Background: An RNA of 177 nucleotides, treated with DMS and 2A3 and read out base by base. DMS adducts were read by reverse transcription with MarathonRT. Conditions: 150 mM KOAc, 10 mM MgCl2 and 150 mM bicine (pH 8.5), 24 C. The data come from the RNA Mapping Database (RMDB), library RFM100. Values cover nucleotides 27 to 126.
[RMDB]
RNA sequence: GGGAACGACUCGAGUAGAGUCGAAAAAAUAAUGUGAUCCGCUAACAUAAAAAAAGUUUGACUUCACAAAAGCAGCUGGAAAUGGACAACCACAAUAUGCAUAAAUCUAACUCCUACCAUCAGCGACUAUCUGAGCUAUCUUCGGAUAGCUCAGAUAAAAAGAAACAACAACAACAAC
Reactivity to DMS in 0.01 (KOAc 150mM, MgCl2 10mM, bicine 150mM(pH8.5), 24C), signal-to-noise 1, nucleotides 027 to 126: a150a010u020a080a060u000g020u000g020a010u060c050c000g110c020u000a080a010c090a130u020a000a010a120a160a190a050a070g000u020u000u020g060a130c030u000u000c130a010c040a070a040a010a070g000c040a000g050c000u010g000g000a040a060a050u000g000g000a100c010a030a200c090c050a000c080a020a040u040a040u010g050c070a130u050a020a020a050u000c040u000a070a110c080u000c010c000u000a110c040c040a070u040c040a030g000c110g000a060c190
Reactivity to 2A3 in 0.01 (KOAc 150mM, MgCl2 10mM, bicine 150mM(pH8.5), 24C), signal-to-noise 2, nucleotides 027 to 126: a010a000u250a050a020u010g010u010g040a000u000c020c050g000c060u050a070a030c040a110u300a130a300a000a000a000a000a020g040u030u030u030g050a030c010u030u000c030a000c000a070a050a000a000g070c020a020g010c040u020g080g000a020a070a060u100g020g010a010c000a090a030c040c020a010c030a120a070u120a150u180g000c060a010u040a180a030a010u120c030u030a000a040c070u000c010c000u000a080c000c000a050u040c090a000g000c000g120a070c040